[RMDB]
RNA sequence: GGGAACGACUCGAGUAGAGUCGAAAACCGGCGGGACGAACGACCCUCGUUCCCUGGUCCGGCGGCGCGUCGCCGGUUUGGGCUUCUCUCCUUUGCGCGGAGACGCAUGAGAACCUCGAUAAGCGCAGUCAUCUUCAAAUUUCGAUUUGAAGAUGACAAAAGAAACAACAACAACAAC
Reactivity to DMS in 0.01 (KOAc 150mM, MgCl2 10mM, bicine 150mM(pH8.5), 24C), signal-to-noise 6, nucleotides 027 to 126: c010c000g010g010c120g020g010g000a030c020g000a050a120c130g010a100c100c070c080u010c030g010u000u000c010c010c000u000g000g000u010c010c040g000g010c050g010g000c120g010c120g020u010c010g000c010c010g010g000u000u010u000g010g010g000c040u000u010c070u000c020u000c050c060u010u010u010g020c030g010c030g020g000a070g010a050c100g000c030a060u010g010a080g000a090a200c030c010u010c080g010a080u030a080a090g010c010g010c040a100
Reactivity to 2A3 in 0.01 (KOAc 150mM, MgCl2 10mM, bicine 150mM(pH8.5), 24C), signal-to-noise 9, nucleotides 027 to 126: c010c000g010g000c100g010g020g020a030c020g010a130a030c070g090a100c020c010c020u020c010g020u030u030c000c000c000u020g030g020u030c020c020g020g010c010g020g010c070g010c040g170u130c010g000c010c010g000g000u020u050u020g020g010g000c010u070u020c010u010c010u010c020c020u050u080u090g010c020g000c010g020g000a020g010a010c020g000c010a020u070g020a020g020a100a040c010c010u040c020g050a090u060a230a050g000c010g000c010a000